Chemical mapping of a 177-nucleotide RNA with DMS and 2A3. 2A3 adducts were read by reverse transcription with SuperScript II with manganese. In probing experiments dimethyl sulfate is read out at A N1 and C N3, which are open when not base-paired. For DMS, 3,267 sequencing reads were counted.
RNA sequence: GGGAACGACUCGAGUAGAGUCGAAAAGCAUAACUGCAAUACCGUAUUGCACUAAAUGGAACUAACAGUCACUUGGAUAUUUUGGAAAGGAUGGCUCAGAAAGGUAUCUCUGAGGAGGUGAUGUUCACCCCGUUAAUUGAUUCGUCAAUUAACGGGGAAAAGAAACAACAACAACAAC
Reactivity to DMS in 0.01 (KOAc 150mM, MgCl2 10mM, bicine 150mM(pH8.5), 24C), signal-to-noise 4, nucleotides 027 to 126: g040c080a040u010a080a140c300u000g000c000a030a060u000a110c190c210g010u010a120u000u000g000c010a050c090u000a050a120a090u000g010g000a060a060c060u000a070a100c110a050g000u010c020a030c020u000u000g010g010a080u000a020u000u000u000u000g010g010a100a090a060g010g010a040u000g000g010c040u010c020a040g000a060a080a080g010g000u000a040u010c070u000c040u000g010a070g020g010a050g010g000u010g000a070u010g000u000u000c080a230
Reactivity to 2A3 in 0.01 (KOAc 150mM, MgCl2 10mM, bicine 150mM(pH8.5), 24C), signal-to-noise 4, nucleotides 027 to 126: g030c020a040u040a180a080c030u070g000c010a010a030u030a100c090c070g120u190a030u000u050g050c010a010c060u060a060a110a110u090g050g020a070a010c030u030a050a030c030a060g070u030c000a010c060u050u070g050g000a020u050a100u100u130u110u060g070g050a070a060a000g080g030a040u060g040g000c020u010c030a010g090a070a080a020g100g020u100a080u100c020u000c020u030g010a030g000g030a020g050g000u020g030a050u050g070u050u050c040a090